Chemical mapping of a 207-nucleotide RNA with 2A3 and DMS.
Source: RMDB library M2RFPK, as collected in RNAgym.
Values are in units of 0.01, from 0 to 300, in steps of 10.
For 2A3 the reverse transcriptase was SuperScript II with manganese.
The RNA was probed in 150 mM KOAc, 10 mM MgCl2 and 150 mM bicine (pH 8.5) at 24 C.
RNA sequence: GGGAACGACUCGAGUAGAGUCGAAAAAGUUUUGCCUGUUAGGUGAGGCUCCUAUGGAAACACAGGCCACUGCCCAAAAAUGUCCAAAGACGCCAAUGGGUAGAACAGGGAUUGUCGGAUUAAGGCUAAAACAGCCCAUGCUUCGGCAUGGGCUGAACAGAUAUACAAUCUUCGGAUUGUAUAUCUGAAAAGAAACAACAACAACAAC
Reactivity to 2A3 in 0.01 (KOAc 150mM, MgCl2 10mM, bicine 150mM(pH8.5), 24C), signal-to-noise 3, nucleotides 027 to 156: a010g040u080u040u080u050g050c020c000u040g070u110u120a060g020g020u060g060a040g030g020c030u060c020c030u080a110u180g090g010a030a110a020c050a020c020a080g060g000c000c030a050c020u020g010c010c010c020a010a010a000a000a010u030g010u000c020c010a140a090a140g010a000c010g010c010c020a030a060u020g010g000g000u010a010g000a040a030c030a040g010g000g050a070u030u070g090u090c020g040g000a020u110u140a080a010g010g010c040u030a010a010a040a060c000a000g000c000c000c000a020u000g010c010u060u070c160g070g000c010a000u050g050g000g000c000u000g000a000a000
Reactivity to DMS in 0.01 (KOAc 150mM, MgCl2 10mM, bicine 150mM(pH8.5), 24C), signal-to-noise 1, nucleotides 027 to 156: a090g010u000u020u000u010g000c000c020u000g000u010u000a050g050g030u000g000a050g020g010c040u000c020c040u010a090u000g010g000a170a130a170c020a040c040a070g000g020c040c040a060c020u010g000c000c000c010a010a040a060a110a080u000g010u000c010c050a080a110a170g030a080c030g040c040c060a080a170u000g000g000g010u000a000g000a080a050c050a090g000g010g000a110u000u000g020u000c010g010g000a110u000u010a080a090g010g000c010u010a050a060a090a180c000a030g010c000c000c000a000u020g010c000u000u000c300g010g000c000a000u000g000g000g040c000u000g010a030a050